Chemical mapping of a 177-nucleotide RNA with DMS and 2A3. DMS adducts were read by reverse transcription with MarathonRT. Conditions: 150 mM KOAc, 10 mM MgCl2 and 150 mM bicine (pH 8.5), 24 C. 2A3 adducts were read by reverse transcription with SuperScript II with manganese. For DMS, 18,250 sequencing reads were counted.
RNA sequence: GGGAACGACUCGAGUAGAGUCGAAAAAUUACAUGUCAUGAGGUCAAUGCAAUUUCUUCCUCUGACCUGUUUAAAAUCAUCAGAAAGAAAUUGGAUAAAGGAGGAAAACCUUUCUUAUCUCCUUGCAUAAUGUCUUUAAAUUCGUUUAAAGACAUUAAAAAGAAACAACAACAACAAC
Reactivity to DMS in 0.01 (KOAc 150mM, MgCl2 10mM, bicine 150mM(pH8.5), 24C), signal-to-noise 9, nucleotides 027 to 126: a090u010u010a040c010a020u000g000u000c020a020u020g010a010g010g010u000c050a040a060u010g010c020a020a010u000u000u000c010u000u010c020c010u000c010u000g000a010c030c050u000g000u000u010u010a050a070a100a110u010c120a090u010c160a100g000a020a010a060g000a010a010a010u000u000g000g010a150u010a060a020a020g010g010a020g010g000a080a050a080a080c150c150u000u010u010c070u010u000a100u010c020u000c010c010u000u000g010c190a130
Reactivity to 2A3 in 0.01 (KOAc 150mM, MgCl2 10mM, bicine 150mM(pH8.5), 24C), signal-to-noise 5, nucleotides 027 to 126: a000u160u080a010c010a010u020g010u010c010a030u200g010a000g000g010u050c060a070a090u140g100c010a010a020u070u040u000c000u030u020c010c010u000c000u000g000a010c000c010u000g070u020u210u120a070a160a040a040u080c050a020u040c040a050g120a050a030a000g000a000a030a010u030u030g010g020a020u090a090a080a020g010g010a010g000g030a050a060a050a090c020c050u050u140u070c030u060u080a080u050c020u000c010c000u000u030g010c000a030